[RMDB]
This 177-nucleotide RNA was probed chemically with DMS and 2A3. The data come from the RNA Mapping Database (RMDB), library OK2TRN. 2A3 adducts were read by reverse transcription with SuperScript II with manganese. Values cover nucleotides 27 to 126.
RNA sequence: GGGAACGACUCGAGUAGAGUCGAAAAUGUUAUCAGUCAAACUGGAAGUAGAAUGUCCACAGUGCAGUGUAACAAAUGUGACAUGUGCAUGAGUUAAGAAACAGCUGUAAUGGGAAAGAUGAAAAAAACCGUUAGAUGAUUUCGAUCAUCUAACGGUAAAAGAAACAACAACAACAAC
Reactivity to DMS in 0.01 (KOAc 150mM, MgCl2 10mM, bicine 150mM(pH8.5), 24C), signal-to-noise 3, nucleotides 027 to 126: u010g020u000u000a090u010c040a080g000u010c060a050a090a210c080u010g000g010a070a090g010u000a100g000a070a080u000g020u000c010c070a070c070a090g010u000g010c020a080g010u000g010u010a020a030c050a060a090a100u020g010u000g010a060c110a060u000g030u010g000c030a030u010g000a140g000u010u000a080a050g010a080a090a020c140a080g010c040u000g000u000a050a050u000g000g010g000a040a060a090g010a080u000g010a000a000a050a110a070a060
Reactivity to 2A3 in 0.01 (KOAc 150mM, MgCl2 10mM, bicine 150mM(pH8.5), 24C), signal-to-noise 2, nucleotides 027 to 126: u140g000u050u020a090u150c030a020g100u020c060a070a030a040c080u040g030g050a090a030g010u130a020g030a160a090u090g030u000c030c040a090c030a060g060u020g040c010a000g000u030g000u090a060a030c030a040a110a080u130g030u020g040a040c030a120u190g080u130g060c030a010u040g030a020g080u030u040a120a050g020a090a080a010c030a010g100c000u020g000u090a060a070u050g000g000g050a030a060a050g070a080u160g070a010a050a040a000a100a000

Conditions: 150 mM KOAc, 10 mM MgCl2 and 150 mM bicine (pH 8.5), 24 C.